[RMDB]
Source information:
Structure probing data (2A3 and DMS) for a 177-nucleotide construct. For 2A3, 2,587 sequencing reads were counted. For DMS, 11,296 sequencing reads were counted. The RNA was probed in 150 mM KOAc, 10 mM MgCl2 and 150 mM bicine (pH 8.5) at 24 C. 2A3 adducts were read by reverse transcription with SuperScript II with manganese.

RNA sequence: GGGAACGACUCGAGUAGAGUCGAAAAUUGCGAAAUACAUAAAACCCUUGGAGCCUUUGCUCUAUAAGGCAUUGGGCAAACUGUACAAGUAUCCCUGCGUAGCCAAGGGAUUUAAUGCUGUCGAGACUAUUAAUAAGACCUUCGGGUCUUAUUAAUAAAAAGAAACAACAACAACAAC
Reactivity to 2A3 in 0.01 (KOAc 150mM, MgCl2 10mM, bicine 150mM(pH8.5), 24C), signal-to-noise 4, nucleotides 027 to 126: u110u070g030c030g040a080a050a060u230a070c050a010u270a070a160a070a080c000c000c000u000u010g010g030a010g010c010c000u040u050u030g010c030u050c050u200a160u100a170a090g030g030c010a010u070u120g030g010g000c050a090a050a030c060u110g020u130a010c020a090a000g100u030a070u030c000c000c010u000g000c010g050u050a010g050c020c000a000a000g000g020g020a000u020u010u040a030a020u030g030c060u080g090u110c050g000a010g010a130c020
Reactivity to DMS in 0.01 (KOAc 150mM, MgCl2 10mM, bicine 150mM(pH8.5), 24C), signal-to-noise 6, nucleotides 027 to 126: u040u030g000c060g000a040a060a090u020a120c030a050u020a050a020a080a090c000c000c000u000u010g010g010a230g010c010c020u000u010u000g000c070u040c110u030a080u060a100a100g000g010c020a040u030u020g010g010g020c090a070a080a100c120u000g000u020a030c100a060a130g000u010a120u020c030c010c000u000g010c240g010u020a090g010c010c000a020a000g010g000g000a100u010u010u000a050a060u010g010c190u010g000u020c030g000a170g000a110c160